An RNA of 177 nucleotides, treated with DMS and 2A3 and read out base by base.
RNA sequence: GGGAACGACUCGAGUAGAGUCGAAAAACGUUACUGGGCCUUGUACACACCACCCGUCACGUCACGAAAGUCGGUAACACCCGAAGCCGGUGGCCCAGCCCUUGUGGAGGGAGCUGUUGAAGGUGGGAAUAAUUUUAAAAUUCGUUUUAAAAUUAUUAAAAGAAACAACAACAACAAC
Reactivity to DMS in 0.01 (KOAc 150mM, MgCl2 10mM, bicine 150mM(pH8.5), 24C), signal-to-noise 9, nucleotides 027 to 126: a090c100g010u010u010a080c030u010g000g000g010c010c030u010u020g010u030a090c080a090c070a090c030c020a090c020c010c040g010u020c070a070c090g010u010c050a060c070g000a090a080a100g020u010c020g010g000u010a060a080c070a120c050c010c010g010a080a160g000c050c040g010g020u010g010g000c010c030c020a060g010c020c020c010u010u010g020u030g010g010a100g010g010g010a180g010c050u010g000u000u000g010a090a120g010g020u010g010g000g010
Reactivity to 2A3 in 0.01 (KOAc 150mM, MgCl2 10mM, bicine 150mM(pH8.5), 24C), signal-to-noise 4, nucleotides 027 to 126: a000c060g040u070u050a040c060u070g010g010g010c010c010u070u100g140u120a020c070a020c020a030c040c020a030c010c020c000g020u040c020a050c060g040u040c000a010c070g060a130a110a020g050u050c030g030g010u060a090a020c040a100c040c000c010g030a020a010g030c040c030g040g040u060g030g000c000c020c000a020g000c000c000c000u060u080g120u100g070g070a060g020g010g010a030g010c050u060g020u100u040g030a060a010g030g030u050g020g000g000

The DMS profile rests on 28,232 reads. The 2A3 profile rests on 3,690 reads. It was measured as part of the RMDB library OK1LIB.